[RMDB]
RNA sequence: GGGAACGACUCGAGUAGAGUCGAAAACUCUUUUACUCGGCAUGAUACCACCGUUAUCGGGUCAACAGAGUAGUUGCAAAUGACAACAAUGCUCAGGGUUAUGCUCUCGCUGCCAAAUGGCGGUGCGCGGACGACUCAAUGUUCGCAUUGAGUCGAACCUAGUAGUCGAUUUCGAUCGACUACUAGGAAAAGAAACAACAACAACAAC
Reactivity to DMS in 0.01 (KOAc 150mM, MgCl2 10mM, bicine 150mM(pH8.5), 24C), signal-to-noise 2, nucleotides 027 to 156: c040u030c040u000u000u000u020a050c070u010c020g000g020c030a130u020g040a130u010a080c010c030a170c010c010g020u000u010a070u010c060g020g030g020u000c020a100a060c060a110g000a060g030u000a070g020u000u000g020c010a060a110a160u000g020a140c010a040a030c020a040a100u000g010c030u010c030a100g040g000g030u000u000a060u000g030c010u000c010u000c020g010c010u010g040c000c010a060a110a140u000g010g020c020g030g050u010g000c070g020c090g000g030a170c010g020a030c000u010c000a000a010u000g010u000u000c260g000c030a050u000u000g010a060g030u000c000g000a020a070
Reactivity to 2A3 in 0.01 (KOAc 150mM, MgCl2 10mM, bicine 150mM(pH8.5), 24C), signal-to-noise 7, nucleotides 027 to 156: c020u050c000u060u130u070u180a120c090u060c030g020g020c020a020u100g010a020u080a120c010c010a020c010c020g170u100u060a040u110c030g000g000g020u030c010a010a030c050a020g010a010g020u040a030g020u020u020g020c060a080a170a300u230g090a140c010a030a010c010a040a140u090g000c000u020c040a030g090g010g000u120u070a050u160g030c000u000c020u000c040g010c020u010g000c000c000a120a210a180u280g010g010c000g010g020u040g020c070g010c030g060g040a040c020g000a010c000u010c000a010a010u020g010u020u080c230g020c090a010u000u010g000a000g000u000c000g000a000a000
Chemical mapping of a 207-nucleotide RNA with DMS and 2A3.
The data come from the RNA Mapping Database (RMDB), library M2RFPK.
Conditions: 150 mM KOAc, 10 mM MgCl2 and 150 mM bicine (pH 8.5), 24 C.
For DMS the reverse transcriptase was MarathonRT.